[RMDB]
RNA sequence: GGGAACGACUCGAGUAGAGUCGAAAAUGUGACGGUCAGCUUCUGUGUGGUCAUACGCAGGUCUAUUCCCCUCGGGUUUCAGGGAGGAAUCCGUUCUGCAUCGCCUUUACGAGCUGGGCUUUGAGGACACAAUCCACACGUUCGCGUGUGGAUUGUGAAAAGAAACAACAACAACAAC
Reactivity to DMS in 0.01 (KOAc 150mM, MgCl2 10mM, bicine 150mM(pH8.5), 24C), signal-to-noise 1, nucleotides 027 to 126: u010g000u000g000a050c100g020g020u000c070a040g010c010u000u000c060u000g100u000g000u000g020g010u010c110a060u010a140c110g020c010a020g000g010u000c050u000a140u000u010c010c010c000c160u000c040g010g000g000u000u000u000c090a110g020g020g030a140g030g000a030a030u000c050c040g000u000u000c050u000g010c020a100u010c140g010c040c000u000u020u010a050c050g010a030g010c020u000g000g000g000c020u010u030u010g000a100g000g030a190
Reactivity to 2A3 in 0.01 (KOAc 150mM, MgCl2 10mM, bicine 150mM(pH8.5), 24C), signal-to-noise 1, nucleotides 027 to 126: u130g030u030g020a040c020g030g160u070c030a010g000c050u120u030c030u150g060u040g000u050g010g020u130c010a030u070a180c060g040c050a040g000g000u000c010u020a090u010u090c000c000c020c020u020c020g160g070g020u070u110u190c050a100g010g100g010a030g010g020a000a010u000c000c040g020u060u000c030u010g040c020a040u080c010g030c000c000u000u060u110a050c030g000a000g010c000u050g040g010g010c010u070u040u070g060a090g020g010a000
The record gives the reactivity of an RNA of 177 nucleotides to DMS and 2A3. For DMS the reverse transcriptase was MarathonRT. In probing experiments dimethyl sulfate is read out at A N1 and C N3, which are open when not base-paired. 2A3 is a SHAPE reagent: it acylates the 2'-hydroxyl of flexible nucleotides of all four kinds.